[RMDB]
RNA sequence: GGGAACGACUCGAGUAGAGUCGAAAAGAUAUGGAAUAUGCCUCGGAUAGCGUGUUUGUCAGCGUUGGACAAUCGGAAACGAUUGUCAUGACGCUUGGAUUUAACACGUGCGGAGUGCAUAUUCCUAAGUCAAAACAGGGUAGUUCGCUACCCUGAACCACUAGGCUUAGUUCGCUAAGCCUAGUGGAAAAGAAACAACAACAACAAC
Reactivity to DMS in 0.01 (KOAc 150mM, MgCl2 10mM, bicine 150mM(pH8.5), 24C), signal-to-noise 1, nucleotides 027 to 156: g010a110u000a220u000g010g010a110a000u000a000u010g000c010c000u010c010g020g000a160u000a110g000c020g000u000g020u010u030u000g000u010c010a060g020c040g010u000u010g050g020a030c000a020a010u010c000g050g010a200a210a240c000g030a010u000u010g010u000c000a030u010g020a000c000g030c010u000u000g020g010a030u010u000u000a020a010c010a020c050g050u000g000c150g040g010a030g000u000g030c000a010u010a000u000u000c000c000u010a000a050g000u000c060a100a090a170a120c010a010g000g020g000u000a040g020u000u010c300g010c020u000a000c010c000c000u000g010a040a130
Reactivity to 2A3 in 0.01 (KOAc 150mM, MgCl2 10mM, bicine 150mM(pH8.5), 24C), signal-to-noise 4, nucleotides 027 to 156: g030a020u050a040u140g010g010a000a000u000a000u010g000c010c010u020c070g240g030a170u130a070g030c000g000u000g020u020u000u020g010u030c010a010g000c000g010u000u010g000g010a010c000a010a000u000c000g040g030a050a050a030c020g000a000u000u000g000u000c040a060u040g000a000c000g010c010u010u110g090g000a020u180u180u200a000a000c020a010c000g000u000g010c030g100g030a010g020u210g010c000a000u000a000u000u000c010c000u000a010a010g010u000c030a010a020a080a150c000a000g020g000g000u000a010g000u070u070c250g020c130u000a000c000c000c000u000g000a010a010
Overview:
The record gives the reactivity of an RNA of 207 nucleotides to DMS and 2A3. For DMS the reverse transcriptase was MarathonRT. The reactions ran in a buffer of 150 mM KOAc, 10 mM MgCl2 and 150 mM bicine (pH 8.5), at 24 C. High DMS reactivity at an A or C suggests that its Watson-Crick edge is free. For DMS, 2,516 sequencing reads were counted. The 2A3 profile rests on 5,184 reads. It was measured as part of the RMDB library RNAMAK.